[RMDB]
RNA sequence: GGGAACGACUCGAGUAGAGUCGAAAAUGGGCUACCAGUAAGCGAAAAAUGAUCCAGGACGAAAAAAACAUAAUUCGAGAUUUUUCAGGAUGGAUUUUUUUAGGUAUCUAUCAAAACUAUUCUGAUGCAACGUAGAGCACGUUCGCGUGCUCUACAACACGCCAUAGUAGUUCGCUACUAUGGCGUGAAAAGAAACAACAACAACAAC
Reactivity to 2A3 in 0.01 (KOAc 150mM, MgCl2 10mM, bicine 150mM(pH8.5), 24C), signal-to-noise 1, nucleotides 027 to 156: u020g000g040g000c020u020a040c030c000a030g100u110a120a000g080c050g030a070a020a040a000a000u040g040a010u030c000c010a010g020g030a020c030g050a080a080a000a000a000a140a000c060a120u130a100a050u080u100c040g030a100g010a180u000u140u110u000u000c000a000g000g000a010u000g010g010a030u010u000u000u000u010u010u000a020g040g000u140a080u220c030u000a000u010c000a000a030a000a020c030u030a000u030u020c030u020g000a020u020g030c040a070a070c020g010u000a000g000a000g020c000a000c010g020u030u040c080g010c000g030u000g010c000u010c000u000a000c000a000a020